[RMDB]
RNA sequence: GGGAACGACUCGAGUAGAGUCGAAAACAAAAUUAAGGGCGAUGCGCGCGAGAAUGAAGAAUGAUAGUGCUGUCCGUCAGGGGGAGGUUAGGAAAUUGUUCGUGGGGAGUUUCAAAUCGCUGAGGUAGAACGUUGUUGCAUCGGCGUAAUGGACUCGGCAUUGAAUUAUCUUCGGAUAAUUCAAUGCAAAAGAAACAACAACAACAAC
Reactivity to 2A3 in 0.01 (KOAc 150mM, MgCl2 10mM, bicine 150mM(pH8.5), 24C), signal-to-noise 1, nucleotides 027 to 156: c030a000a040a100a010u210u180a020a050g020g020g000c000g030a020u020g030c040g010c000g000c070g020a020g030a020a080u120g020a020a030g050a040a050u090g040a040u070a030g040u040g000c000u010g010u000c020c020g030u030c040a040g000g000g000g000g010a000g000g050u030u010a040g040g300a030a040a300u110u070g020u080u150c150g000u110g000g000g050g000a010g000u060u000u150c020a040a020a020u140c050g000c020u000g010a000g010g020u070a050g040a150a030c090g010u020u030g010u010u040g060c040a040u000c010g040g000c000g000u120a060a070u070g010g000a020c030u000c060g030